[RMDB]
RNA sequence: GGGAACGACUCGAGUAGAGUCGAAAAUCCAAAGGGAUCGCAUUGAUCCUUCAUCGCUCUCGCUCGCUUCCAUGGCGGUCGUCGUCUACAAGCAGCUUGACGGAUCAUGCGAUCCUUUUGGAGGCUUUGACGAUCUGAUGUUCGCAUCAGAUCGUCAAAAAGAAACAACAACAACAAC
Reactivity to 2A3 in 0.01 (KOAc 150mM, MgCl2 10mM, bicine 150mM(pH8.5), 24C), signal-to-noise 1, nucleotides 027 to 126: u020c010c000a010a020a010g000g000g000a000u020c000g020c020a000u050u300g000a010u020c000c020u020u010c010a020u010c030g030c040u040c000u000c050g000c020u040c050g030c000u140u050c150c060a080u140g050g010c020g060g030u160c110g090u070c010g010u010c030u130a060c010a080a000g020c020a000g040c060u000u030g000a020c020g000g000a010u010c000a000u000g020c030g000a000u000c000c000u020u000u000u000g000g000a000g000g000c010u000u000